Notes:
Structure probing data (2A3 and DMS) for a 207-nucleotide construct. Conditions: 150 mM KOAc, 10 mM MgCl2 and 150 mM bicine (pH 8.5), 24 C. The data come from the RNA Mapping Database (RMDB), library M2RFPK.
RNA sequence: GGGAACGACUCGAGUAGAGUCGAAAAGGGUGAUGUCUCCUAACCUUUAUCAAUGGGGGCACUCGGUCGUGCUGUGGGUAGAAAUUUUAUUUCGUGGCUACCUUAGACGCUUGUCGUCGGGAGUAUGUGGGACUGAUGAACUUCGGUUCAUCAGUAAGUUACCAUUCCCUUUCGAGGGAAUGGUAACAAAAGAAACAACAACAACAAC
Reactivity to 2A3 in 0.01 (KOAc 150mM, MgCl2 10mM, bicine 150mM(pH8.5), 24C), signal-to-noise 3, nucleotides 027 to 156: g050g000g010u070g010a050u050g020u030c020u030c010c010u040a090a090c030c020u060u110u110a250u170c100a100a060u170g000g000g000g000g020c010a050c020u030c050g040g020u050c040g030u050g010c040u050g010u070g020g000g000u020a050g100a020a130a050u120u160u110u100a180u030u140u100c050g010u050g070g010c020u020a100c000c000u030u050a030g020a020c000g000c020u080u190g060u170c010g000u010c020g020g050g000a040g020u050a070u170g080u100g010g030g000a000c010u000g000a000u000g000a000a000c000u020u050c140g070g000u000u000c000a000u000c000a000g000u010a000a000
Reactivity to DMS in 0.01 (KOAc 150mM, MgCl2 10mM, bicine 150mM(pH8.5), 24C), signal-to-noise 1, nucleotides 027 to 156: g010g020g050u010g020a070u000g010u000c040u010c010c030u000a130a110c070c030u000u000u000a070u020c100a070a100u000g030g080g030g020g040c000a020c010u000c040g020g020u000c070g040u000g010c020u000g000u020g010g000g000u000a100g020a040a070a140u000u020u000u000a080u000u010u000c070g040u000g010g020c010u000a030c010c040u000u000a160g010a040c050g010c020u000u000g010u010c010g040u000c000g000g010g010a130g010u010a030u000g030u000g020g000g040a200c000u000g000a060u000g010a010a000c000u000u000c300g080g010u000u000c000a020u000c020a000g010u000a010a050